[RMDB]
RNA sequence: GGGAACGACUCGAGUAGAGUCGAAAACGUCCUAGUUUCGACUAGGACGAAAUAAAAUCAGCGGUAAAUAAUCGAGGCGUAUUACCGCUGAACGCCUCGAUUAAAUGCGAUGAUUCGUCAUCGCAAAUCCUUGAGGUUGAUUCGUCAACCUCAAGGAAAAAGAAACAACAACAACAAC
Reactivity to 2A3 in 0.01 (KOAc 150mM, MgCl2 10mM, bicine 150mM(pH8.5), 24C), signal-to-noise 1, nucleotides 027 to 126: c000g010u000c000c000u000a000g030u020u060u070c230g080a010c000u000a000g010g010a000c000g000a010a000a000u120a000a060a020a060u060c030a010g000c010g030g070u050a090a080a140u060a010a110u080c000g010a000g000g000c000g000u040a080u050u130a040c020c010g000c000u000g000a000a000c000g000c010c000u020c010g010a000u020u040a060a060a080u080g010c010g000a000u010g000a010u020u060c200g060u020c040a000u010c010g000c000a000a000a030
Reactivity to DMS in 0.01 (KOAc 150mM, MgCl2 10mM, bicine 150mM(pH8.5), 24C), signal-to-noise 1, nucleotides 027 to 126: c000g020u000c010c000u000a000g000u010u000u020c200g030a020c020u000a010g000g000a010c010g000a020a040a030u000a060a040a070a080u000c030a020g000c020g000g000u000a050a140a080u020a030a010u000c010g000a020g030g000c010g030u000a070u000u000a110c020c020g000c010u000g010a010a020c000g010c000c000u000c000g030a010u000u000a000a070a140u010g000c000g020a010u000g010a030u000u020c200g030u000c000a000u000c000g020c000a020a020a100